[RMDB]
RNA sequence: GGGAACGACUCGAGUAGAGUCGAAAAUACACACUUGUAGUCCCAGCUUCUCAGUAGGCUAAGGUGGGAAGAAUCACCUGAGUCCCUGAGGUCAAGGCUGCAGUGAGCCGAGAUUACACCACUGGACUCCUUUGUGGCUAUUCGUAGCCACAAAGGAAAAAGAAACAACAACAACAAC
Reactivity to DMS in 0.01 (KOAc 150mM, MgCl2 10mM, bicine 150mM(pH8.5), 24C), signal-to-noise 3, nucleotides 027 to 126: u010a050c070a090c260a100c200u020u060g050u000a020g020u000c000c020c020a210g020c080u020u050c000u000c000a000g030u000a190g010g010c010u000a070a010g010g010u000g000g030g000a110a070g000a160a230u020c000a000c000c000u000g010a030g020u000c020c150c000u040g020a000g010g010u030c190a180a130g000g000c020u000g000c020a020g020u000g000a060g020c000c010g000a160g000a170u040u030a080c200a150c220c020a040c000u000g000g010a270c160
Description:
Conditions: 150 mM KOAc, 10 mM MgCl2 and 150 mM bicine (pH 8.5), 24 C. An RNA of 177 nucleotides, treated with DMS and read out base by base. For DMS, 3,485 sequencing reads were counted. Reactivities are given for positions 27 through 126. Source: RMDB library OK1LIB, as collected in RNAgym.